[RMDB]
An RNA of 177 nucleotides, treated with DMS and 2A3 and read out base by base. Source: RMDB library OK2TST, as collected in RNAgym. The 2A3 profile rests on 2,376 reads. Reactivities are given for positions 27 through 126. For DMS, 2,677 sequencing reads were counted. Conditions: 150 mM KOAc, 10 mM MgCl2 and 150 mM bicine (pH 8.5), 24 C. For DMS the reverse transcriptase was MarathonRT.
RNA sequence: GGGAACGACUCGAGUAGAGUCGAAAAGAUCGCUGCUUCAAUGCGGGCAUGAUGUUCCUCGAGUGAUGGGACAAGCUUUUCCACUUGAGCAUUCACGAUGCUGCCGGGUCCUUGCCGGUAAUAUGCGCAGGUCUACACUUUUCGAAGUGUAGACCUGAAAAGAAACAACAACAACAAC
Reactivity to DMS in 0.01 (KOAc 150mM, MgCl2 10mM, bicine 150mM(pH8.5), 24C), signal-to-noise 3, nucleotides 027 to 126: g020a060u000c040g000c110u000g000c050u000u000c120a070a060u020g030c060g020g020g000c140a050u000g000a030u000g010u000u000c030c000u000c060g030a140g030u010g020a030u010g030g010g000a070c050a030a080g000c040u000u000u000u010c030c030a110c040u000u010g000a040g020c030a060u010u010c180a100c080g010a100u000g000c080u000g000c010c030g010g000g000u000c080c060u010u000g010c020c000g000g020u010a040a030u020a070u010g000c170g000
Reactivity to 2A3 in 0.01 (KOAc 150mM, MgCl2 10mM, bicine 150mM(pH8.5), 24C), signal-to-noise 3, nucleotides 027 to 126: g070a020u100c030g000c060u060g000c020u110u120c070a050a120u140g000c110g000g020g000c020a060u120g020a030u040g060u040u030c010c010u010c020g140a150g080u180g070a090u160g020g000g040a020c020a040a050g050c000u090u040u070u030c030c020a060c020u020u020g000a020g020c010a030u090u130c090a020c050g050a030u070g000c040u040g000c020c010g000g040g040u100c040c030u020u070g070c010c000g000g040u020a080a040u100a090u110g060c100g000